[RMDB]
This 177-nucleotide RNA was probed chemically with 2A3 and DMS. The reactions ran in a buffer of 150 mM KOAc, 10 mM MgCl2 and 150 mM bicine (pH 8.5), at 24 C. The 2A3 profile rests on 15,091 reads.
RNA sequence: GGGAACGACUCGAGUAGAGUCGAAAACGUGCGUACUGGGCCGCCGGCACAAUGUUCAACCCAGCCGUCUCAGAGGUCGCGGUUCGACGACGAUCAGCCAGCGGGUCAGCGGGGUCCUCCUAGCUAGACCUCAGGUAAUAUUCGUAUUACCUGAGGUAAAAGAAACAACAACAACAAC
Reactivity to 2A3 in 0.01 (KOAc 150mM, MgCl2 10mM, bicine 150mM(pH8.5), 24C), signal-to-noise 6, nucleotides 027 to 126: c030g060u130g060c040g100u110a070c030u040g020g020g050c010c010g020c010c010g010g000c020a020c020a080a100u150g020u100u050c020a010a050c010c010c000a010g010c020c000g130u070c060u040c170a120g070a100g120g030u060c040g020c090g050g000u030u050c090g020a020c020g020a020c040g030a150u100c030a010g020c010c010a000g010c010g030g030g240u020c010a000g010c020g020g020g010g010u020c010c000u030c000c010u050a050g020c020u040a050g070
Reactivity to DMS in 0.01 (KOAc 150mM, MgCl2 10mM, bicine 150mM(pH8.5), 24C), signal-to-noise 9, nucleotides 027 to 126: c090g010u010g020c080g020u010a100c030u000g010g010g010c030c040g020c030c030g010g020c030a110c090a080a090u010g010u010u000c130a070a070c020c010c020a140g010c030c020g010u010c150u010c220a120g010a150g010g010u000c040g010c110g000g010u000u000c110g020a050c020g010a090c140g010a090u000c150a130g000c030c020a050g010c030g000g000g000u000c020a030g010c060g000g000g000g000u000c030c040u000c030c020u010a090g010c110u000a120g000